[RMDB]
This 177-nucleotide RNA was probed chemically with DMS and 2A3. 2A3 adducts were read by reverse transcription with SuperScript II with manganese. For DMS, 1,772 sequencing reads were counted. The 2A3 profile rests on 2,125 reads. For DMS the reverse transcriptase was MarathonRT.
RNA sequence: GGGAACGACUCGAGUAGAGUCGAAAAGCUGUGAUCGUACGUGAUCGCUGAUCCUGCAUGUCAUAGCGCGGCGCGCGCUGAUCGUACCUGGCCGUACGUGCUGUCACACGCGUCACAGGAUCCGUACACUCACGCGUCCAUUCGUGGACGCGUGAGUAAAAGAAACAACAACAACAAC
Reactivity to DMS in 0.01 (KOAc 150mM, MgCl2 10mM, bicine 150mM(pH8.5), 24C), signal-to-noise 2, nucleotides 027 to 126: g020c020u000g080u000g020a020u020c080g030u020a030c070g030u020g000a050u000c070g010c030u000g010a090u000c030c020u020g000c060a080u000g010u010c070a040u000a010g000c010g030c010g000g000c160g000c110g020c100g000c040u010g000a090u010c120g030u000a190c080c080u010g000g000c070c050g000u000a040c030g000u000g020c030u000g000u020c100a020c010a030c040g010c030g020u000c090a110c030a050g000g000a030u000c010c010g000u000a030c090
Reactivity to 2A3 in 0.01 (KOAc 150mM, MgCl2 10mM, bicine 150mM(pH8.5), 24C), signal-to-noise 2, nucleotides 027 to 126: g080c080u050g050u030g080a040u110c020g030u060a080c030g030u210g020a020u050c170g000c120u030g040a090u040c040c040u040g010c030a050u080g010u000c010a030u050a050g020c000g000c000g070g000c090g000c020g020c030g000c110u020g050a100u110c100g050u060a130c000c020u000g060g000c040c020g080u160a190c010g010u050g020c010u000g010u020c010a010c000a000c020g040c020g080u060c050a020c010a010g050g000a010u020c000c000g020u020a020c010